[RMDB]
RNA sequence: GGGAACGACUCGAGUAGAGUCGAAAAUGUUACCGCCCACGCAUUCCCGCGCGCGCCCAUUCGGCACGCCCUCCUCCUCGACCCGCGCCAAAUGAAAGACCCCGCGCAGCUCGCACCGCGCGGGGUCCAAUCGAUAAACGUUCGCGUUUAUCGAUUGAAAAGAAACAACAACAACAAC
Reactivity to 2A3 in 0.01 (KOAc 150mM, MgCl2 10mM, bicine 150mM(pH8.5), 24C), signal-to-noise 2, nucleotides 027 to 126: u120g010u050u110a080c020c000g020c010c020c000a050c040g010c010a030u070u080c020c000c020g020c010g000c000g000c000g030c010c050c000a060u130u160c040g010g010c050a020c080g010c020c000c000u000c010c000u000c010c000u020c010g030a030c030c000c000g000c020g010c010c020a070a140a100u230g050a100a110a050g000a030c000c000c000c000g000c000g000c010a060g050c070u140c160g030c030a090c030c030g000c000g000c000g030g000g000g000u000c000
Reactivity to DMS in 0.01 (KOAc 150mM, MgCl2 10mM, bicine 150mM(pH8.5), 24C), signal-to-noise 2, nucleotides 027 to 126: u010g000u000u010a100c030c030g030c020c010c050a060c140g000c050a120u010u010c010c020c010g030c140g020c010g010c060g010c030c030c100a120u000u010c110g020g000c030a070c050g000c010c010c000u000c010c030u000c000c020u000c050g010a110c030c000c020g030c070g050c030c060a040a040a090u020g010a080a100a090g000a010c000c000c000c020g040c000g000c020a040g000c040u020c150g000c240a230c230c060g010c030g020c000g040g010g000g010u000c010